Structure probing data (2A3) for a 207-nucleotide construct.

RNA sequence: GGGAACGACUCGAGUAGAGUCGAAAACAGUCACAAGUCACUGUGGACAAUUUAACAUAUACUGUACGAUCACAAAGAACCAAGUACAGAGAAAAGCUAAAGCAAAGAAACCAGGAGAGGCCAACAGAAAUCCUGACUUCAUCUGUACAGCCCCUAACCUAAAUCCACGUUUCGACGUGGAUUUAGGAAAAGAAACAACAACAACAAC
Reactivity to 2A3 in 0.01 (KOAc 150mM, MgCl2 10mM, bicine 150mM(pH8.5), 24C), signal-to-noise 1, nucleotides 027 to 156: c010a010g010u050c010a050c060a120a030g010u000c000a020c060u040g020u030g000g050a030c070a130a110u080u140u220a170a050c040a020u090a000u060a040c000u010g000u030a010c060g020a060u110c090a010c070a240a230a030g170a100a020c030c000a120a000g010u000a000c010a000g000a000g030a020a070a000a000g070c060u190a210a040a000g020c060a070a100a180g010a150a080a000c100c050a020g020g010a060g000a000g110g080c120c030a030a030c040a060g120a100a040a080u000c000c000u010g040a050c000u020u000c040a090u000c000u000g000u030a010c020a050g070c000c000c000c000u030a040a020

Values cover nucleotides 27 to 156. It was measured as part of the RMDB library OK3TST. The RNA was probed in 150 mM KOAc, 10 mM MgCl2 and 150 mM bicine (pH 8.5) at 24 C. For 2A3 the reverse transcriptase was SuperScript II with manganese.